[RMDB]
RNA sequence: GGGAACGACUCGAGUAGAGUCGAAAAGGACUGCGCAGUCCGGCAACAUCAGCAGAGAGCCCGCUAUACGUGACGGAUUGGCUGAAGCGUACAGAAAUAUUGAGCCUCCUGCAAGAGGCACCCAAGCAAAACGUACGUGAGUUCGCUCACGUACGAAUCUUAAAUCCAGGUUCGCCUGGAUUUAAGAAAAAGAAACAACAACAACAAC
Reactivity to DMS in 0.01 (KOAc 150mM, MgCl2 10mM, bicine 150mM(pH8.5), 24C), signal-to-noise 2, nucleotides 027 to 156: g000g010a060c000u000g040c140g000c040a120g010u000c020c010g020g000c040a060a070c050a060u000c050a130g040c010a110g000a180g030a120g010c010c020c050g020c020u000a090u010a050c080g030u000g000a300c050g000g010a300u010u000g030g050c000u000g000a070a290g010c040g030u010a070c030a150g000a120a120a110u000a120u030u020g020a100g010c000c000u000c000c000u000g000c140a160a120g000a080g040g030c010a000c020c010c000a110a300g020c130a080a070a160a190c010g010u000a010c000g030u000g000a020g000u010u000c300g020c000u020c010a010c020g000u000a010c000g010a010a040
Reactivity to 2A3 in 0.01 (KOAc 150mM, MgCl2 10mM, bicine 150mM(pH8.5), 24C), signal-to-noise 4, nucleotides 027 to 156: g040g000a030c040u070g040c200g050c180a030g030u000c010c000g000g020c000a050a060c020a110u070c030a010g000c030a010g070a000g000a020g130c020c020c050g030c030u050a070u030a100c100g040u040g040a020c020g030g020a130u160u140g110g020c010u040g020a040a000g000c000g000u020a030c030a040g130a050a170a020u240a080u160u170g030a050g000c000c000u010c010c040u070g040c040a050a050g010a020g020g020c000a020c000c010c010a020a020g030c030a030a040a020a080c000g000u000a000c000g000u000g000a000g000u030u070c160g030c090u000c000a000c000g000u000a000c000g000a000a000
An RNA of 207 nucleotides, treated with DMS and 2A3 and read out base by base. The 2A3 profile rests on 2,620 reads. Conditions: 150 mM KOAc, 10 mM MgCl2 and 150 mM bicine (pH 8.5), 24 C. Reactivities are given for positions 27 through 156. DMS (dimethyl sulfate) methylates the pairing face of unpaired adenines and cytosines. DMS adducts were read by reverse transcription with MarathonRT.